[RMDB]
RNA sequence: GGGAACGACUCGAGUAGAGUCGAAAAAUCAGCCUUCGUUCUGUAAACGGGGUUGGAUCCGACUCUCAUAGGCUCUCCGACCCAACUCCUACUCAAUACGUCCUCGUCGUACAGAACGGUAACAUGUAAAACGAAGGCUGCUUCGGCAGCCUUCGAAGUAGACAAUAACGUUCGCGUUAUUGUCUACAAAAGAAACAACAACAACAAC
Reactivity to 2A3 in 0.01 (KOAc 150mM, MgCl2 10mM, bicine 150mM(pH8.5), 24C), signal-to-noise 3, nucleotides 027 to 156: a000u080c020a010g090c010c010u070u090c020g000u020u010c030u020g050u070a050a040a110c040g030g000g000g000u020u000g030g000a030u270c000c010g070a080c040u080c020u040c100a170u140a190g030g000c010u010c000u010c040c010g010a010c000c010c010a020a050c020u050c010c010u060a090c030u070c120a070a120u110a180c050g110u090c010c060u030c050g050u030c030g000u030a010c010a010g010a020a000c010g010g000u080a060a030c050a070u120g080u230a050a080a010a000c010g010a000a000g000g000c000u000g000c000u010u020c080g080g000c000a000g000c000c000u000u000c000g000a000a010
Reactivity to DMS in 0.01 (KOAc 150mM, MgCl2 10mM, bicine 150mM(pH8.5), 24C), signal-to-noise 1, nucleotides 027 to 156: a120u000c020a080g010c020c020u000u000c010g000u000u000c000u000g010u000a120a100a090c120g020g010g040g050u000u000g010g020a060u000c030c010g000a110c030u000c030u000c080a200u000a180g000g010c040u000c050u000c020c020g000a100c030c010c000a060a030c030u000c010c050u000a070c080u000c030a040a110u000a100c080g000u000c010c020u000c020g020u000c050g010u000a090c020a040g010a010a020c010g030g020u010a020a080c030a100u020g010u000a120a050a070a180c000g000a040a000g020g070c030u000g000c030u000u000c240g040g000c000a020g090c000c000u000u000c000g020a010a060
Conditions: 150 mM KOAc, 10 mM MgCl2 and 150 mM bicine (pH 8.5), 24 C. The record gives the reactivity of an RNA of 207 nucleotides to 2A3 and DMS. For DMS, 2,820 sequencing reads were counted. 2A3 adducts were read by reverse transcription with SuperScript II with manganese. It was measured as part of the RMDB library M2RFPK. For DMS the reverse transcriptase was MarathonRT.